[RMDB]
RNA sequence: GGGAACGACUCGAGUAGAGUCGAAAAUUUUCUGAUCCUGUGAAGCAUUUCAAUGGUAGUUUAGUGGGAAUAGCAUUGAAUCGAUAAAUUACUUUGAGCAGUAUGGUAUGGCCAUUUUCACAAUAUUGAUUCUUUCUAUCCAUGAACAUGGAAUGUAAUCAUUAGUCCACUUCGGUGGACUAAUGAUAAAAGAAACAACAACAACAAC
Reactivity to DMS in 0.01 (KOAc 150mM, MgCl2 10mM, bicine 150mM(pH8.5), 24C), signal-to-noise 1, nucleotides 027 to 156: u020u000u000u010c040u020g040a110u010c030c010u000g000u000g020a080a170g000c000a040u010u000u010c060a070a160u000g020g010u000a060g010u020u000u000a060g040u010g000g020g010a050a050u000a010g020c060a100u000u030g010a060a100u000c080g010a040u010a040a060a070u000u000a050c070u000u000u000g010a100g000c050a080g030u010a090u010g010g010u000a080u000g030g000c030c030a070u000u000u000u010c020a060c060a070a140u000a010u000u010g000a080u000u000c000u010u000u010c010u010a170u000c020c030a070u010g010a100a050c050a070u000g000g000a070a080u000g000u000a110
Reactivity to 2A3 in 0.01 (KOAc 150mM, MgCl2 10mM, bicine 150mM(pH8.5), 24C), signal-to-noise 3, nucleotides 027 to 156: u070u020u010u010c030u070g010a020u060c020c010u050g040u050g080a060a060g020c040a020u040u020u130c110a110a130u080g150g000u100a110g100u140u100u110a160g030u090g000g010g000a060a100u010a000g000c030a010u000u100g000a000a030u050c030g000a000u090a060a090a010u150u070a130c070u140u060u110g040a030g030c030a020g030u130a050u080g020g010u070a090u130g090g000c010c040a040u070u000u120u130c090a070c020a120a050u040a080u070u110g030a060u020u040c000u000u030u030c040u060a110u020c020c030a020u020g060a100a040c030a040u040g030g000a020a010u040g030u090a040